RNA sequence: GGGAACGACUCGAGUAGAGUCGAAAACUGGAUCUCUUCGAGGUCAGGAGAUUUAACCUAAGGACUGGGGGAACUCGGUGUCGGCAUCUGUUAAUUCCUUUUGGAAUUUAGAGCCAUUGAAGGUGAAUAGGAGAAGAAGAUUCGUCUUCUUCUCCUAAAAAGAAACAACAACAACAAC
Reactivity to DMS in 0.01 (KOAc 150mM, MgCl2 10mM, bicine 150mM(pH8.5), 24C), signal-to-noise 5, nucleotides 027 to 126: c080u000g010g000a030u000c000u000c000u000u010c120g010a070g000g010u010c050a050g000g010a040g000a070u010u020u020a110a070c020c020u010a120a130g010g000a040c010u000g010g020g000g020g050a110a100c030u000c040g000g000u010g010u010c080g000g010c010a070u010c010u000g010u010u020a020a030u000u000c000c000u020u020u010u040g010g000a020a000u000u000u010a030g010a070g010c030c000a120u020u030g010a100a060g000g010u010g000a100a170
Reactivity to 2A3 in 0.01 (KOAc 150mM, MgCl2 10mM, bicine 150mM(pH8.5), 24C), signal-to-noise 4, nucleotides 027 to 126: c020u030g040g040a010u000c010u000c030u080u120c160g130a110g080g060u080c060a030g050g020a030g000a000u110u090u110a070a050c000c010u020a040a030g100g010a050c020u040g010g000g000g000g040a020a060c010u010c020g020g000u050g040u080c090g010g000c010a120u000c000u010g040u060u030a000a000u010u030c000c000u010u160u160u300g010g020a000a000u000u000u030a050g000a000g010c020c010a020u050u170g050a080a030g030g040u080g010a070a070